Conditions: 150 mM KOAc, 10 mM MgCl2 and 150 mM bicine (pH 8.5), 24 C. An RNA of 177 nucleotides, treated with DMS and read out base by base. The DMS profile rests on 1,087 reads.

RNA sequence: GGGAACGACUCGAGUAGAGUCGAAAAAAUUUGUUGCCAAGUUAUGAUGAUGAUAUGUCAUAUGGUCCAACAAUUUGGGGCCCUGAAGCCUAUGUCAAGUCAUUUGAAAAGUUUACAUAUAAGGAACCCUUCAUUAACGGUUCGCCGUUAAUGAAGGAAAAGAAACAACAACAACAAC
Reactivity to DMS in 0.01 (KOAc 150mM, MgCl2 10mM, bicine 150mM(pH8.5), 24C), signal-to-noise 1, nucleotides 027 to 126: a030a040u000u010u010g010u000u010g010c070c040a090a200g020u010u000a060u000g010a050u000g000a090u010g010a080u020a100u010g020u000c010a010u000a020u000g000g000u000c120c030a030a050c050a020a080u000u000u010g020g000g000g000c050c010c030u000g000a060a120g000c040c020u000a010u000g000u000c050a040a160g000u000c120a070u000u000u000g000a060a030a070a130g000u010u000u000a070c010a080u000a110u010a160a100g030g000a080a060c170